Structure probing data (2A3 and DMS) for a 177-nucleotide construct. The DMS profile rests on 4,313 reads. 2A3 is a SHAPE reagent: it acylates the 2'-hydroxyl of flexible nucleotides of all four kinds. For 2A3 the reverse transcriptase was SuperScript II with manganese.
RNA sequence: GGGAACGACUCGAGUAGAGUCGAAAAAGUUUCCAAUUCGUUGGAAACUACUGUCGGAAUCCGGAAUAUAAAAUCCUCCGCUUAAGGAUUUUACCGACUUAAAGUACACUAGUUUCGACUAGUGUAAAUUUGUUAACUAGUUCGCUAGUUAACAAAUAAAAGAAACAACAACAACAAC
Reactivity to 2A3 in 0.01 (KOAc 150mM, MgCl2 10mM, bicine 150mM(pH8.5), 24C), signal-to-noise 2, nucleotides 027 to 126: a000g010u020u000u000c000c000a000a010u060u030c150g030u060u020g000g000a030a010a000c000u010a040c050u050g020u020c020g010g030a080a050u030c050c090g100g220a150a000u300a030u080a150a200a010a070u060c000c040u090c090c040g130c120u140u120a050a030g000g000a000u000u000u040u100a040c010c010g000a010c010u000u090a100a060a040g070u030a010c000a000c010u000a010g020u050u100u080c160g110a000c000u010a000g000u010g010u000a010a010
Reactivity to DMS in 0.01 (KOAc 150mM, MgCl2 10mM, bicine 150mM(pH8.5), 24C), signal-to-noise 4, nucleotides 027 to 126: a220g010u000u000u010c000c000a020a020u000u010c150g020u000u000g010g000a020a010a000c000u000a040c080u010g000u000c000g010g000a170a070u000c070c060g010g020a130a070u010a140u000a040a040a040a050u000c070c010u000c140c170g010c230u020u020a130a050g000g000a010u000u000u000u000a120c010c010g000a010c020u000u000a070a080a130g000u000a010c010a000c000u000a000g000u000u000u000c210g010a030c000u000a000g000u000g000u000a000a030